[RMDB]
RNA sequence: GGGAACGACUCGAGUAGAGUCGAAAACGCUUGCCUCUGAUUUUUUAUUUGACGAAUGUCCGGAUAUGAGCAAGAAGCACCUAAGUGCGGAUUGCGAAUAUACGGAGGCUGGUGUAAGCCAGCCGUGAAUGGAAACACUAUUCGUAGUGUUUCCAUUAAAAGAAACAACAACAACAAC
Reactivity to 2A3 in 0.01 (KOAc 150mM, MgCl2 10mM, bicine 150mM(pH8.5), 24C), signal-to-noise 9, nucleotides 027 to 126: c040g020c060u050u100g050c020c020u060c060u050g120a180u030u040u050u040u050u150a220u150u140u160g100a060c050g050a160a070u140g040u060c000c000g000g000a000u000a000u010g020a020g000c000a000a010g010a010a000g000c000a000c020c140u220a300a060g000u010g000c000g010g020a020u000u000g000c000g000a000a000u010a000u000a010c000g000g010a010g000g000c000u000g000g020u030g040u060a050a030g020c000c000a000g000c010c000g010u040g080
Reactivity to DMS in 0.01 (KOAc 150mM, MgCl2 10mM, bicine 150mM(pH8.5), 24C), signal-to-noise 9, nucleotides 027 to 126: c100g010c080u000u000g010c020c020u010c040u000g000a020u000u010u010u010u010u020a060u020u020u010g000a090c090g010a100a080u020g020u000c000c000g000g000a010u000a000u000g010a300g000c010a010a010g010a300a260g000c000a010c000c270u030a110a120g020u000g010c000g000g000a300u000u000g000c010g000a150a010u000a010u000a020c000g010g000a050g000g010c000u000g000g010u000g000u020a080a110g010c000c000a010g010c000c000g010u010g000
This 177-nucleotide RNA was probed chemically with 2A3 and DMS.
DMS adducts were read by reverse transcription with MarathonRT.
Source: RMDB libraries RFM100 and RFMREP, as collected in RNAgym.
The reactions ran in a buffer of 150 mM KOAc, 10 mM MgCl2 and 150 mM bicine (pH 8.5), at 24 C.